Structure probing data (DMS and 2A3) for a 207-nucleotide construct. It was measured as part of the RMDB library OK3TST. The reactions ran in a buffer of 150 mM KOAc, 10 mM MgCl2 and 150 mM bicine (pH 8.5), at 24 C.
[RMDB]
RNA sequence: GGGAACGACUCGAGUAGAGUCGAAAAUCACGCCUGUAAUCCCAACACUUUGGGAAGGUAAGGAAGGAGAAUUUCUUGAGCCCAGGAGUUCAAGACCAGUCUGGGCAACAUGGUGAAACUCCGCCUCUGCAAGAAAUACAGAUAUACAAAAAUUACCCACUUGCUUAAAUUUCGAUUUAAGCAAGUGAAAAGAAACAACAACAACAAC
Reactivity to DMS in 0.01 (KOAc 150mM, MgCl2 10mM, bicine 150mM(pH8.5), 24C), signal-to-noise 1, nucleotides 027 to 156: u010c030a060c110g030c030c000u000g000u000a070a210u010c000c020c000a050a170c090a050c190u000u000u020g010g000g030a030a040g050g000u010a060a020g030g030a050a070g000g000a070g030a080a140u000u010u000c010u000u000g030a120g040c030c000c010a080g020g000a120g010u010u000c100a030a140g010a060c060c040a130g010u010c030u010g010g010g000c010a050a050c060a140u010g050g000u000g020a050a030a120c000u000c000c170g000c010c010u000c030u010g000c020a060a180g000a070a000a130u010a150c020a030g010a120u030a120u010a180c090a030a050a100a040a130u010u000a130c020c100
Reactivity to 2A3 in 0.01 (KOAc 150mM, MgCl2 10mM, bicine 150mM(pH8.5), 24C), signal-to-noise 3, nucleotides 027 to 156: u070c010a000c070g040c010c000u040g130u140a060a080u060c010c000c010a030a040c090a040c130u150u170u020g010g000g010a040a000g020g010u060a040a040g040g040a100a140g020g010a020g030a110a090u000u040u000c000u010u020g010a020g000c020c010c030a000g000g030a040g010u130u170c160a200a020g050a040c040c020a010g030u020c020u010g000g000g010c000a000a000c020a020u060g000g020u040g020a050a010a020c010u000c000c000g000c000c010u040c020u050g000c030a060a090g040a110a030a010u130a010c010a010g080a060u090a020u020a160c040a030a170a070a060a070u130u150a090c050c000